[RMDB]
Chemical mapping of a 177-nucleotide RNA with 2A3 and DMS. For 2A3 the reverse transcriptase was SuperScript II with manganese. Reactivities are rounded to 0.1 and cut off at 0 and 3. The RNA was probed in 150 mM KOAc, 10 mM MgCl2 and 150 mM bicine (pH 8.5) at 24 C.
RNA sequence: GGGAACGACUCGAGUAGAGUCGAAAAGAGGAGGAGUUACAGGCAGUAGCGUGUCGCAGCUCUCCAUGCAGAACGUAAUGGAGGCGAAUCAAAAUCGAGUGUUAAGUCGGCAACCGCUGCGUCGCACAUAUCACGACGUGUUCGCACGUCGUGAUAUAAAAGAAACAACAACAACAAC
Reactivity to 2A3 in 0.01 (KOAc 150mM, MgCl2 10mM, bicine 150mM(pH8.5), 24C), signal-to-noise 5, nucleotides 027 to 126: g080a040g050g020a030g030g010a040g040u100u110a050c060a050g070g020c030a060g030u050a030g010c020g020u020g030u030c000g000c020a020g000c030u050c000u000c110c000a010u020g020c010a050g110a300a120c080g060u150a230a080u010g000g010a010g010g000c020g040a020a080u080c040a030a020a030a130u180c070g030a040g040u130g040u180u170a100a120g070u060c030g030g000c020a060a060c080c020g000c010u020g000c030g000u060c040g000c010a060c010
Reactivity to DMS in 0.01 (KOAc 150mM, MgCl2 10mM, bicine 150mM(pH8.5), 24C), signal-to-noise 2, nucleotides 027 to 126: g010a040g000g000a080g020g000a090g000u000u000a060c150a110g000g020c000a100g010u010a100g020c080g010u020g000u010c010g000c010a080g000c000u010c020u000c010c000a000u030g000c000a150g010a070a300c220g010u000a090a000u000g020g010a000g010g000c000g030a110a050u000c130a020a040a060a090u040c060g000a120g000u050g000u000u000a030a090g000u010c020g000g030c120a040a020c110c050g000c000u000g010c030g000u010c070g020c060a090c180